[RMDB]
RNA sequence: GGGAACGACUCGAGUAGAGUCGAAAACUGUCGUUCUUCGGAACGACAGAAAGAACGCGUGGGUCACCCAAGGAGGAGCGUGUGGGACGCGACAAACCCAAAAAAGCGUUCGGUUCGCCGAACGCAAGUUAUUAUACGAGUUCGCUCGUAUAAUAACAAAAGAAACAACAACAACAAC
Reactivity to DMS in 0.01 (KOAc 150mM, MgCl2 10mM, bicine 150mM(pH8.5), 24C), signal-to-noise 6, nucleotides 027 to 126: c000u000g000u000c000g010u000u000c000u000u010c180g030g000a010a000c010g010a010c000a000g010a040a080a110g020a070a060c050g010c050g020u000g010g010g010u010c040a090c020c030c030a100a100g010g010a110g000g010a110g020c090g020u000g020u000g000g010g010a080c030g000c030g010a080c120a050a100a100c010c000c020a000a060a070a080a100a090g000c000g010u000u000c000g000g000u000u020c170g010c000c010g010a010a010c000g010c000a000a030
Reactivity to 2A3 in 0.01 (KOAc 150mM, MgCl2 10mM, bicine 150mM(pH8.5), 24C), signal-to-noise 6, nucleotides 027 to 126: c000u000g000u000c000g010u010u000c000u030u020c180g100g000a010a000c000g010a000c000a000g000a000a010a000g020a070a020c020g010c020g050u080g020g110g090u050c030a050c040c010c030a030a070g130g050a070g040g030a070g060c080g020u080g000u040g050g020g030a020c020g000c010g020a020c060a030a090a090c000c000c050a070a090a010a020a010a010g010c000g000u000u010c000g000g010u030u040c190g030c030c000g000a000a000c000g000c000a000a010